[RMDB]
RNA sequence: GGGAACGACUCGAGUAGAGUCGAAAAGCACGUCCGGCAAGACCCGUGCGAACACUUGAGCUCCGGCUUGUCCGCUCUUGUGGAUUAGGACGUUCUAGCUCCGGCUUGGCCGCUAGUUCGUCCGAAACACUAGGCACCAUUUCGAUGGUGCCUAGUGAAAAGAAACAACAACAACAAC
Reactivity to DMS in 0.01 (KOAc 150mM, MgCl2 10mM, bicine 150mM(pH8.5), 24C), signal-to-noise 4, nucleotides 027 to 126: g000c020a030c020g010u000c080c050g010g000c100a120a100g000a100c110c030c030g030u020g010c030g020a120a150c090a030c020u000u030g010a110g000c060u020c180c110g000g010c070u020u000g010u050c020c030g030c030u000c020u020u010g000u000g000g000a150u020u010a060g000g000a000c000g030u000u000c020u000a000g000c060u010c160c020g000g010c120u040u040g030g000c080c140g000c010u000a000g000u020u000c000g020u000c010c000g000a040a070a160
Reactivity to 2A3 in 0.01 (KOAc 150mM, MgCl2 10mM, bicine 150mM(pH8.5), 24C), signal-to-noise 7, nucleotides 027 to 126: g020c030a010c020g040u040c060c020g040g000c050a050a040g100a220c010c010c010g010u020g000c010g030a120a020c030a010c050u050u060g030a010g010c020u050c100c060g040g000c040u100u210g060u090c000c010g000c010u020c000u020u040g000u010g030g010a050u040u170a040g000g000a000c000g000u000u000c000u000a020g010c030u050c120c060g190g040c130u160u290g150g020c020c020g000c010u000a000g000u010u000c000g000u000c000c000g000a010a010a000